[RMDB]
RNA sequence: GGGAACGACUCGAGUAGAGUCGAAAACAAAAAGGUAAACGAGCGUAAAGUGGGAGAUGUAAAAGGAGUUGACAUCUCCACGAACACCGAAAGGUGGCGGUACGUUUACCGCAUCUUUCUAAACAAACUCGAUGGAUGCAUUCGUGCAUCCAUCGAGAAAAGAAACAACAACAACAAC
Reactivity to 2A3 in 0.01 (KOAc 150mM, MgCl2 10mM, bicine 150mM(pH8.5), 24C), signal-to-noise 1, nucleotides 027 to 126: c020a000a070a010a000a010g000g000u030a000a000a000c000g000a080g230c060g000u060a000a000a110g070u070g040g000g040a070g000a000u000g000u010a000a110a300a220g190g000a100g020u150u060g080a000c000a000u000c000u000c000c000a010c000g000a030a000c030a000c000c000g000a000a000a000g000g000u000g000g000c000g000g010u060a230c000g000u000u000u000a000c000c000g050c150a020u010c000u030u180u000c010u080a090a100a100c000a170a110a030

Record summary
An RNA of 177 nucleotides, treated with 2A3 and read out base by base. Values cover nucleotides 27 to 126. 2A3 adducts were read by reverse transcription with SuperScript II with manganese.